[RMDB]
RNA sequence: GGGAACGACUCGAGUAGAGUCGAAAAACAACCACCACCGAGCGGAAACAGAUUGAGGAACCCGUGCGUCAGCGACCCCAUGGCGCGCAGGUCAACCGGGGUGCCGGCGGCCCGCAGGGCGGUCGCGCCACUGCCUCGUAUUCGUACGAGGCAGUGGAAAAGAAACAACAACAACAAC
Reactivity to 2A3 in 0.01 (KOAc 150mM, MgCl2 10mM, bicine 150mM(pH8.5), 24C), signal-to-noise 5, nucleotides 027 to 126: a000c030a020a020c010c010a010c030c000a020c000c010g030a020g040c020g020g080a050a060a050c050a080g130a160u180u230g090a120g060g050a070a040c000c000c000g010u010g000c000g030u020c010a030g020c010g080a070c000c000c010c010a020u040g000g000c020g010c000g010c020a020g020g030u030c030a030a060c030c020g020g000g000g050u050g040c000c000g040g020c010g020g000c010c020c000g070c060a070g040g030g020c040g040g010u020c010g010c000g020
Reactivity to DMS in 0.01 (KOAc 150mM, MgCl2 10mM, bicine 150mM(pH8.5), 24C), signal-to-noise 2, nucleotides 027 to 126: a080c160a100a070c030c010a070c020c020a050c060c060g000a060g020c030g000g000a040a120a050c120a020g000a110u020u010g000a080g010g010a090a060c040c000c000g020u000g000c020g030u000c020a060g030c100g000a200c010c000c010c030a130u000g000g000c000g010c040g030c070a000g020g000u000c040a090a080c020c010g000g000g010g020u010g010c030c050g000g030c020g000g000c000c030c000g010c040a070g000g020g000c040g010g000u000c030g000c080g000

Overview
This 177-nucleotide RNA was probed chemically with 2A3 and DMS. Conditions: 150 mM KOAc, 10 mM MgCl2 and 150 mM bicine (pH 8.5), 24 C. For 2A3 the reverse transcriptase was SuperScript II with manganese. The DMS profile rests on 3,964 reads. Reactivities are given for positions 27 through 126. 2A3 is a SHAPE reagent: it acylates the 2'-hydroxyl of flexible nucleotides of all four kinds. It was measured as part of the RMDB library OK1LIB.